Structure probing data (2A3 and DMS) for a 207-nucleotide construct. DMS adducts were read by reverse transcription with MarathonRT. The RNA was probed in 150 mM KOAc, 10 mM MgCl2 and 150 mM bicine (pH 8.5) at 24 C. DMS (dimethyl sulfate) methylates the pairing face of unpaired adenines and cytosines.
RNA sequence: GGGAACGACUCGAGUAGAGUCGAAAAGGACUCCGUGAGGAGUCCGUGCAGCGAGAGCUGCACAAGGGCUAAGUGACUGUCGGUGCCCCUCCUCUACGAUGUUGAGUAGAGGAGAGUAGUCGUCUCACGAUUUAUAGUGAGACUGACAUGACAGUGGAUCAUUCUACUCAUUCGUGAGUAGAAUGAUAAAAGAAACAACAACAACAAC
Reactivity to 2A3 in 0.01 (KOAc 150mM, MgCl2 10mM, bicine 150mM(pH8.5), 24C), signal-to-noise 3, nucleotides 027 to 156: g000g000a000c000u000c000c000g020u030g020a030g000g000a000g000u000c000c000g000u000g000c000a010g010c010g020a070g010a010g020c000u010g040c000a000c010a000a040g010g010g000c020u090a030a040g060u040g100a020c000u000g000u000c000g020g070u060g010c000c000c000c000u000c000c000u000c000u000a000c000g050a060u090g030u130u060g040a020g010u000a000g000a000g000g000a000g000a000g000u020a000g000u000c000g000u000c000u000c000a000c010g030a030u030u220u080a210u140a050g000u000g000a000g000a000c000u010g000a000c000a000u050g000a000c000a000g000u000g000g030
Reactivity to DMS in 0.01 (KOAc 150mM, MgCl2 10mM, bicine 150mM(pH8.5), 24C), signal-to-noise 3, nucleotides 027 to 156: g030g010a020c000u000c000c000g010u000g000a140g020g000a030g020u000c000c010g040u000g030c010a010g000c010g000a300g000a300g000c000u000g030c000a000c010a050a070g010g010g000c020u000a060a210g040u000g010a140c000u000g010u000c000g010g000u000g000c030c000c000c000u000c010c000u000c000u010a010c010g000a190u010g020u010u000g000a300g030u010a010g000a020g020g000a000g000a020g010u010a050g010u000c000g000u000c000u010c000a010c000g000a220u000u000u000a130u010a170g000u000g000a020g010a020c000u000g060a000c000a090u000g000a010c000a000g010u000g000g000